This 207-nucleotide RNA was probed chemically with 2A3 and DMS.
The RNA was probed in 150 mM KOAc, 10 mM MgCl2 and 150 mM bicine (pH 8.5) at 24 C.
RNA sequence: GGGAACGACUCGAGUAGAGUCGAAAAGAGUUCGGUUGGAGCGACAAGUAUUUAGCUUGCGAUAGCUAAAUCACCUCGGUAUGAUUAGGGUGAGACCUAGGAACCGUAGGGGUAUUCUCAAAGGAAGGUUACCGAACAACCUUCGGGUUGUUCGGAAGUUACUUAUUUGGUUCGCCAAAUAAGUAACAAAAGAAACAACAACAACAAC
Reactivity to 2A3 in 0.01 (KOAc 150mM, MgCl2 10mM, bicine 150mM(pH8.5), 24C), signal-to-noise 3, nucleotides 027 to 156: g070a010g010u060u100c080g030g050u080u090g050g020a040g010c030g070a060c040a060a010g040u070a050u000u010u010a000g000c010u010u030g060c030g050a070u130a030g000c000u000a000a000a010u020c010a030c000c010u030c020g010g000u260a180u190g040a060u030u100a020g030g000g030u040g080a060g040a050c010c020u010a020g020g010a030a010c020c010g020u040a030g010g000g020g000u030a080u080u110c080u020c020a070a100a020g080g010a050a010g060g040u070u060a030c000c000g000a000a000c000a000a000c000c000u030u020c060g070g000g010u000u010g000u000u000c010g000g010a000a000
Reactivity to DMS in 0.01 (KOAc 150mM, MgCl2 10mM, bicine 150mM(pH8.5), 24C), signal-to-noise 2, nucleotides 027 to 156: g010a090g010u000u000c020g000g040u000u000g000g020a080g050c040g010a070c030a030a080g010u000a050u000u000u000a010g000c010u000u010g030c140g000a140u010a040g000c000u000a010a020a040u000c000a040c010c000u010c020g000g010u000a090u010g010a180u000u000a060g010g020g020u010g000a300g000a150c040c010u000a090g010g010a100a070c010c030g050u000a030g020g000g000g000u000a060u000u000c030u010c070a060a060a120g000g010a070a050g010g010u000u010a180c000c010g010a020a040c000a020a010c000c010u000u000c300g020g000g030u000u010g010u000u000c000g020g020a000a050

Description
2A3 adducts were read by reverse transcription with SuperScript II with manganese. It was measured as part of the RMDB library M2RFPK.